[RMDB]
RNA sequence: GGGAACGACUCGAGUAGAGUCGAAAAGCUGAGGCAGGAGAAUCACUUGAACCUGGGAGGCGGAGGUUGCAGUGAGCCAAGAUCACACCACUGAACUCCUGCCUGGGUGACAGAGUGAGACUCGGUCCACUAUCGAGACAUUCGUGUCUCGAUAGUGAAAAGAAACAACAACAACAAC
Reactivity to DMS in 0.01 (KOAc 150mM, MgCl2 10mM, bicine 150mM(pH8.5), 24C), signal-to-noise 6, nucleotides 027 to 126: g020c070u000g010a080g000g000c020a060g010g000a030g000a090a180u000c020a020c020u000u000g010a080a030c010c010u000g010g000g030a060g020g010c120g000g000a040g010g000u010u000g010c000a030g010u000g000a090g030c090c090a080a080g020a080u010c110a080c120a130c070c020a030c030u000g010a070a090c020u000c010c010u000g030c010c020u000g010g000g000u000g000a110c180a140g010a040g000u010g010a050g000a210c020u000c020g000g010u000c040
Reactivity to 2A3 in 0.01 (KOAc 150mM, MgCl2 10mM, bicine 150mM(pH8.5), 24C), signal-to-noise 4, nucleotides 027 to 126: g060c060u070g040a050g020g000c030a050g040g200a010g030a030a040u020c010a010c020u010u030g020a010a010c000c000u020g020g010g040a040g070g080c070g000g020a020g020g060u130u140g110c030a010g010u020g030a040g060c070c070a110a050g080a100u140c050a020c010a000c080c020a010c010u010g030a090a020c010u020c000c010u050g060c000c010u000g000g000g000u020g010a050c050a050g120a000g040u000g000a010g010a010c000u000c010g020g000u020c010
This 177-nucleotide RNA was probed chemically with DMS and 2A3. The RNA was probed in 150 mM KOAc, 10 mM MgCl2 and 150 mM bicine (pH 8.5) at 24 C. Reactivities are given for positions 27 through 126. For DMS, 7,670 sequencing reads were counted. For DMS the reverse transcriptase was MarathonRT.